[RMDB]
RNA sequence: GGGAACGACUCGAGUAGAGUCGAAAACAAAAGAAUGGAAGGAAAGUUUUGCUUUCAAAAUGCGACAUGAAGACAUCGUUAAAUCUGGAGUGGUCAUUCAUGGCUGUGGUGGCUCUGGAAAAUCACAGGAUGGUAAGACCUUCGGGUCUUACCAUCCAAAAGAAACAACAACAACAAC
Reactivity to 2A3 in 0.01 (KOAc 150mM, MgCl2 10mM, bicine 150mM(pH8.5), 24C), signal-to-noise 1, nucleotides 027 to 126: c000a000a040a000a000g130a020a000u300g040g040a000a000g050g050a100a000a100g020u010u040u230u080g110c000u000u250u000c000a000a170a000a000u300g020c000g000a000c000a030u030g040a050a000g060a000c160a030u140c080g080u130u060a000a300a160u050c000u050g000g000a190g250u140g000g080u110c000a160u020u000c000a000u000g030g040c090u200g000u050g120g020u000g020g020c000u000c030u000g130g080a020a070a020a020u060c000a000c000a050